This 177-nucleotide RNA was probed chemically with 2A3 and DMS. The data come from the RNA Mapping Database (RMDB), libraries RFM100 and RFMREP. 2A3 adducts were read by reverse transcription with SuperScript II with manganese.
RNA sequence: GGGAACGACUCGAGUAGAGUCGAAAAGUGUGCUUGUGGUGGCUAUGGAAAGGGGGCACUGACUGGUGAUGCUGAUAUUGGAGUGCAUCUGAGGCUGUUGUAGAAAUAACAUGGGUUGUUGAUUACACCCAGUAUCUACAUUCGUGUAGAUACUGGGAAAAGAAACAACAACAACAAC
Reactivity to 2A3 in 0.01 (KOAc 150mM, MgCl2 10mM, bicine 150mM(pH8.5), 24C), signal-to-noise 5, nucleotides 027 to 126: g080u070g040u060g040c040u080u060g020u040g040g050u040g020g030c040u050a070u090g050g010a020a030a050g030g010g000g020g000c010a020c020u030g040a030c010u020g000g060u020g030a050u080g010c030u030g030a090u060a110u190u160g060g030a020g020u050g020c000a030u020c040u060g030a040g050g000c020u010g030u050u040g020u030a020g110a040a100a030u170a070a040c090a080u050g030g060g010u010u000g020u000u010g040a160u060u060a020c020a040
Reactivity to DMS in 0.01 (KOAc 150mM, MgCl2 10mM, bicine 150mM(pH8.5), 24C), signal-to-noise 2, nucleotides 027 to 126: g050u010g010u010g000c090u000u000g000u000g000g060u010g000g000c050u010a090u040g000g060a060a070a080g040g030g000g000g000c010a040c070u000g010a070c050u000g000g000u010g000a080u010g000c040u030g010a120u020a140u000u000g010g010a060g010u020g020c090a070u010c020u010g000a120g000g010c050u000g000u000u010g000u000a070g000a030a060a060u030a050a080c110a110u020g000g000g020u000u000g000u010u000g000a060u010u020a120c240a100